[RMDB]
RNA sequence: GGGAACGACUCGAGUAGAGUCGAAAAUUGUGGCCCCGGCUCACUUACCGCAGCGUUUACAGAAGAAGUUAUACGUAGAGGUAGUGCUCGGUCAUUAGAGUUGCAUGCCAUUGAUAUUGAAAGAAAACCUACGCUCACAAUUCGUUGUGAGCGUAGGAAAAGAAACAACAACAACAAC
Reactivity to DMS in 0.01 (KOAc 150mM, MgCl2 10mM, bicine 150mM(pH8.5), 24C), signal-to-noise 1, nucleotides 027 to 126: u000u050g050u000g000g020c000c000c080c000g040g010c030u010c010a030c050u010u010a040c000c030g020c170a300g000c000g000u010u000u000a050c040a060g020a130a150g020a150a180g010u000u010a090u000a060c060g040u000a060g040a120g000g010u000a030g000u000g000c070u000c050g020g000u000c000a000u000u010a070g030a060g050u010u030g000c140a090u000g020c040c010a010u000u000g000a040u000a090u030u010g010a110a120a150g000a080a040a040a160